[RMDB]
RNA sequence: GGGAACGACUCGAGUAGAGUCGAAAAGGGUUAGUCGGUCCUAAGAGAUAGGGAACCUCCGUUUUAAAGAAGGCUCUUGUUAGUCUGACCUAUCGAAAGGGAAUGUAGUUAAGAUUCUACAACUGGGAGAGUGUAAAUCGUUCGCGAUUUACACUCUAAAAGAAACAACAACAACAAC
Reactivity to DMS in 0.01 (KOAc 150mM, MgCl2 10mM, bicine 150mM(pH8.5), 24C), signal-to-noise 6, nucleotides 027 to 126: g010g000g000u020u010a030g010u000c040g010g010u010c000c010u000a090a090g010a250g000a010u000a020g000g000g000a050a060c030c090u010c150c130g010u010u010u010u010a050a090a140g020a050a000g010g000c010u000c030u040u010g020u040u030a020g030u000c020u000g000a090c000c000u000a010u000c020g010a120a130a100g000g010g010a100a060u010g030u000a030g020u000u020a110a120g010a180u020u020c010u000a020c060a050a130c070u020g000g020g030
Reactivity to 2A3 in 0.01 (KOAc 150mM, MgCl2 10mM, bicine 150mM(pH8.5), 24C), signal-to-noise 4, nucleotides 027 to 126: g030g000g010u060u110a070g020u040c060g010g050u020c020c000u020a060a050g040a000g000a060u010a010g010g020g030a050a030c010c050u040c030c100g030u000u030u020u150a060a060a030g060a010a010g010g010c000u020c020u120u130g180u240u110a000g000u020c020u010g060a060c010c000u000a020u020c020g070a070a020a020g050g000g050a150a140u110g000u010a000g000u030u110a180a050g010a260u080u010c000u000a050c000a050a050c070u050g000g000g020